[RMDB]
RNA sequence: GGGAACGACUCGAGUAGAGUCGAAAAAGAUGGCAGGUUCACCCCGUACGGUGCGGAAGUUCGCGCUUCCGUGAAACGCGAAAAUCGGACGGUGGCUGCAAGUCGCAUUGCAAAACCGCGGCAAGUGUUAACCUGGACCUCUUCGGAGGUCCAGGAAUGUCAAGAUACGAUUCGUCGUAUCUUGACAAAAAGAAACAACAACAACAAC
Reactivity to DMS in 0.01 (KOAc 150mM, MgCl2 10mM, bicine 150mM(pH8.5), 24C), signal-to-noise 1, nucleotides 027 to 156: a110g000a110u000g010g030c030a100g070g060u010u020c080a080c060c030c030c000g040u000a030c000g010g040u000g000c040g000g000a070a020g040u000u000c200g010c270g000c020u000u000c010c070g000u000g020a040a050a060c010g000c030g020a090a020a230a070u000c030g000g010a020c020g000g010u010g000g060c010u010g050c020a000a090g010u000c110g000c050a260u000u010g000c070a090a130a020a160c120c060g040c010g000g070c050a040a120g020u010g010u000u020a040a150c000c010u000g000g000a040c000c000u000c000u000u010c280g000g020a060g000g000u000c000c000a000g000g010a000a020
Reactivity to 2A3 in 0.01 (KOAc 150mM, MgCl2 10mM, bicine 150mM(pH8.5), 24C), signal-to-noise 1, nucleotides 027 to 156: a000g110a080u150g040g000c030a030g000g110u110u100c030a040c010c020c000c000g000u020a010c010g050g060u090g020c000g000g000a000a000g000u090u250c100g100c060g010c100u000u000c000c010g000u020g020a100a130a000c070g030c080g150a000a000a040a110u110c010g000g040a000c040g060g010u060g040g040c010u000g000c010a050a000g030u000c020g040c060a080u100u110g000c030a030a000a000a100c000c040g000c000g000g000c060a040a030g040u010g060u200u030a100a060c000c000u000g000g000a000c010c000u000c030u010u000c010g060g010a000g000g000u030c010c000a000g000g000a000a000
An RNA of 207 nucleotides, treated with DMS and 2A3 and read out base by base. The RNA was probed in 150 mM KOAc, 10 mM MgCl2 and 150 mM bicine (pH 8.5) at 24 C. For 2A3, 602 sequencing reads were counted. The data come from the RNA Mapping Database (RMDB), library M2RFPK. Values cover nucleotides 27 to 156. High DMS reactivity at an A or C suggests that its Watson-Crick edge is free.